[RMDB]
RNA sequence: GGGAACGACUCGAGUAGAGUCGAAAAGUGAUACUCGAAAUGAAAGACGAGGGUAUUUCCUCACCUUCAUCUUCGUCUUCUUGUUCAGGAGAAGAAUAUUCAUCUUCAUAUUCGUCUUGUUCAGGGGUGAUCUUUUUACAUUCGUGUAAAAAGAUCAAAAAGAAACAACAACAACAAC
Reactivity to DMS in 0.01 (KOAc 150mM, MgCl2 10mM, bicine 150mM(pH8.5), 24C), signal-to-noise 9, nucleotides 027 to 126: g010u000g010a110u010a060c070u010c030g010a050a060a070u010g000a080a030a040g010a030c080g010a050g000g010g010u000a090u000u010u010c030c020u000c140a070c030c020u000u000c020a030u000c090u000u000c040g000u000c030u000u000c020u000u000g010u000u000c080a060g010g000a050g010a060a070g010a030a050u000a060u000u000c100a070u000c100u000u010c080a060u000a070u000u000c020g000u000c020u000u000g010u000u000c020a070g000g010g010g010
Reactivity to 2A3 in 0.01 (KOAc 150mM, MgCl2 10mM, bicine 150mM(pH8.5), 24C), signal-to-noise 9, nucleotides 027 to 126: g100u090g050a050u070a160c040u040c050g040a050a070a090u130g030a150a060a020g040a030c080g000a010g020g020g010u120a210u060u120u100c000c010u010c010a030c000c010u030u060c010a040u020c060u030u020c010g030u010c000u100u020c000u020u070g030u050u040c020a020g030g110a040g020a290a110g030a060a040u070a050u080u140c100a190u040c090u190u090c050a020u020a050u080u030c020g040u000c030u020u030g010u010u010c020a020g000g010g030g030